[RMDB]
RNA sequence: GGGAACGACUCGAGUAGAGUCGAAAAGUAGCGCGUGGGAGGUGAGUCGACGAAACGCCUUUCUAGCGCCGCGGUGUGAUGCGUAGGUGACGAUACGUAGAGGCUGCGGAGCUCAGCACCUGCAUAGGCCGCUUGGGUCGUUCGCGAUCUAAGCGGCAAAAGAAACAACAACAACAAC
Reactivity to 2A3 in 0.01 (KOAc 150mM, MgCl2 10mM, bicine 150mM(pH8.5), 24C), signal-to-noise 4, nucleotides 027 to 126: g060u050a000g000c000g000c000g010u040g010g020g000a000g000g030u020g030a040g040u040c010g070a140c030g000a070a020a030c020g000c000c000u000u040u010c020u030a020g000c000g000c000c000g000c010g010g010u060g030u050g040a060u060g010c010g000u020a020g000g070u070g040a050c050g010a050u020a050c010g020u020a030g020a020g070g030c010u030g000c020g030g000a000g000c020u000c030a010g000c000a030c000c000u010g000c020a040u050a040g080
Reactivity to DMS in 0.01 (KOAc 150mM, MgCl2 10mM, bicine 150mM(pH8.5), 24C), signal-to-noise 4, nucleotides 027 to 126: g020u010a050g000c020g010c020g000u000g000g010g010a000g020g030u030g000a130g010u010c040g000a100c140g000a060a050a100c060g010c010c010u000u000u010c010u010a170g040c000g020c010c010g020c020g000g000u000g010u030g010a080u000g000c000g020u000a040g000g000u010g000a080c080g010a090u000a020c030g010u010a030g010a160g000g000c020u000g010c030g010g000a060g000c040u000c090a080g000c030a070c010c010u010g020c070a060u020a070g010

Structure probing data (2A3 and DMS) for a 177-nucleotide construct.